Notes: Chemical mapping of a 177-nucleotide RNA with DMS and 2A3. The data come from the RNA Mapping Database (RMDB), library RFM100.

[RMDB]
RNA sequence: GGGAACGACUCGAGUAGAGUCGAAAAUCCCCGAAAUAGCUUUAGGGCUAGCGUCGCGCGUUAACCCCGGGAGGUAGAGCACCGGAUCGAUGAGGGGGCUUCGCCGCCUACCGAUUCGAACCGAACUACGACUCUGCUGUUUCGACAGCAGAGUCGUAAAAGAAACAACAACAACAAC
Reactivity to DMS in 0.01 (KOAc 150mM, MgCl2 10mM, bicine 150mM(pH8.5), 24C), signal-to-noise 1, nucleotides 027 to 126: u000c000c110c000c190g000a070a020a210u000a000g000c000u000u000u010a140g000g090g090c000u000a030g090c170g000u000c070g000c090g070c230g030u000u000a140a020c070c000c000c280g150g000g090a020g000g000u000a010g010a140g000c070a070c300c070g000g050a120u000c000g120a000u000g000a300g000g000g000g030g000c000u000u100c300g000c300c300g000c000c000u000a230c000c000g000a260u000u000c000g000a000a140c000c000g000a090a240c190u000
Reactivity to 2A3 in 0.01 (KOAc 150mM, MgCl2 10mM, bicine 150mM(pH8.5), 24C), signal-to-noise 1, nucleotides 027 to 126: u010c010c010c000c000g070a070a000a140u170a020g040c060u040u130u240a120g010g090g000c000u000a030g010c000g010u080c020g000c010g000c000g000u000u060a070a050c020c000c000c000g000g150g000a010g090g020u060a070g000a040g000c120a050c000c070g000g000a000u050c000g000a000u000g000a010g000g040g000g000g010c010u100u050c060g080c060c000g000c000c000u100a300c020c030g010a000u000u000c000g000a020a000c000c000g000a000a000c000u030